This 177-nucleotide RNA was probed chemically with DMS and 2A3. Reactivities are given for positions 27 through 126. For DMS, 1,057 sequencing reads were counted. DMS (dimethyl sulfate) methylates the pairing face of unpaired adenines and cytosines. The RNA was probed in 150 mM KOAc, 10 mM MgCl2 and 150 mM bicine (pH 8.5) at 24 C.

RNA sequence: GGGAACGACUCGAGUAGAGUCGAAAAGUUUGCUAUGGAAAAAGUGGCGCCAAUCGAGAUUUUUGAGACCCUAGGCUCAAAAAUAAGGCAUAGAAUUCCAAAGGAAGUCGCUGCCGUGAGCACAACCGAAUCACUAAUGGUUCGCCAUUAGUGAUUCAAAAGAAACAACAACAACAAC
Reactivity to DMS in 0.01 (KOAc 150mM, MgCl2 10mM, bicine 150mM(pH8.5), 24C), signal-to-noise 2, nucleotides 027 to 126: g000u010u000u020g020c020u000a200u000g000g000a090a050a060a190a070g010u000g040g000c030g000c040c050a070a050u020c110g010a080g010a050u010u010u000u000u000g000a050g000a090c010c180c140u010a100g000g000c000u000c000a010a000a020a000a020u010a060a110g020g010c070a110u010a110g000a070a070u010u000c020c020a100a160a160g000g010a030a070g040u000c020g010c050u010g000c020c020g000u000g010a050g010c050a040c160a050a120c150c090
Reactivity to 2A3 in 0.01 (KOAc 150mM, MgCl2 10mM, bicine 150mM(pH8.5), 24C), signal-to-noise 1, nucleotides 027 to 126: g050u090u090u040g050c030u030a040u140g060g050a110a070a080a180a100g050u010g000g010c000g000c060c040a010a050u180c060g020a060g000a270u020u030u020u050u020g060a090g000a120c010c090c050u040a080g000g010c000u020c000a040a020a000a000a020u080a080a070g030g020c010a010u000a090g060a060a090u110u000c050c040a170a070a050g060g010a000a050g000u010c020g000c020u020g040c000c010g050u070g050a030g000c040a020c030a160a000c030c030